[RMDB]
RNA sequence: GGGAACGACUCGAGUAGAGUCGAAAACGGAGAGCCAAAAUACAUUGAUUUGCCAGCCACUGAGACAGAUCGGAUGUAUAUAGCCAAAGAGGGAUACUGUUAUCUCAACAUUUUCUUGGCGAUGCUAGUUGAACACCAUGUUCGCAUGGUGUUCAACAAAAGAAACAACAACAACAAC
Reactivity to 2A3 in 0.01 (KOAc 150mM, MgCl2 10mM, bicine 150mM(pH8.5), 24C), signal-to-noise 5, nucleotides 027 to 126: c050g070g060a110g010a020g120c030c060a000a200a000a000u040a010c020a020u000u050g000a020u040u000u030g010c000c000a030g110c140c010a270c090u080g020a090g080a260c010a000g030a000u010c000g030g020a000u020g020u000a030u010a020u070a100g000c020c030a000a070a000g070a080g040g020g000a010u020a060c090u180g140u300u060a030u030c000u030c030a100a150c050a090u160u190u120u010c020u010u020g010g000c050g020a010u150g050c050u050a050
Reactivity to DMS in 0.01 (KOAc 150mM, MgCl2 10mM, bicine 150mM(pH8.5), 24C), signal-to-noise 4, nucleotides 027 to 126: c090g020g010a100g000a080g010c050c130a050a060a170a080u020a030c020a020u010u010g000a030u000u000u010g000c000c020a050g000c110c120a050c080u000g000a060g000a130c010a010g000a020u000c020g010g020a040u010g000u010a030u000a030u010a150g010c020c010a030a020a100g030a120g000g000g000a040u020a030c300u040g000u010u030a010u000c060u010c020a060a100c190a120u040u000u010u000c050u000u000g000g010c010g000a080u010g030c080u010a080
The record gives the reactivity of an RNA of 177 nucleotides to 2A3 and DMS.
The reactions ran in a buffer of 150 mM KOAc, 10 mM MgCl2 and 150 mM bicine (pH 8.5), at 24 C.
2A3 adducts were read by reverse transcription with SuperScript II with manganese.